[RMDB]
RNA sequence: GGGAACGACUCGAGUAGAGUCGAAAACGUUUAAACACUGGAGUGCUCAGUGCAUACAGCUCGGUGCCGAGGACAGAGAAGGCGCCAGACCAAACGGCAGAGGGGAACGAGAGCUGCUUUCGCGUCUUCGCAGAUCGUUGAAGGGUCGUCGUGAUACGUCUUUGACUUAUUUCGAUAAGUCAAAGACAAAAGAAACAACAACAACAAC
Reactivity to 2A3 in 0.01 (KOAc 150mM, MgCl2 10mM, bicine 150mM(pH8.5), 24C), signal-to-noise 7, nucleotides 027 to 156: c030g010u030u080u140a070a080a000c050a010c040u040g050g030a090g080u130g030c030u040c100a050g030u030g050c030a050u120a110c050a040g020c030u050c050g040g040u050g010c020c020g020a050g020g070a040c020a070g120a000g020a090a020g020g000c010g000c020c000a010g020a030c030c000a060a070a030c040g020g000c020a010g030a060g050g030g010g010a030a030c070g020a030g000a020g130c030u060g030c000u060u070u080c050g000c020g040u010c010u050u030c040g020c030a040g010a150u070c040g040u070u090g050a080a040g020g010g020u030c020g020u020c010g010u030g040a040u060a170c090
Reactivity to DMS in 0.01 (KOAc 150mM, MgCl2 10mM, bicine 150mM(pH8.5), 24C), signal-to-noise 3, nucleotides 027 to 156: c070g010u000u000u000a060a080a060c020a020c020u000g020g010a150g040u000g010c050u010c040a100g000u020g020c030a190u010a120c070a070g020c010u000c030g030g070u000g020c020c000g010a120g000g030a240c020a130g010a130g010a060a080g000g010c000g050c030c020a080g010a070c070c040a060a090a070c050g000g010c040a090g030a160g030g000g000g030a080a060c080g010a110g000a070g020c040u010g010c020u000u010u000c040g040c060g020u000c000u000u000c000g030c030a150g000a090u010c030g030u000u000g020a100a050g000g000g000u000c040g030u000c030g020u000g020a130u000a100c170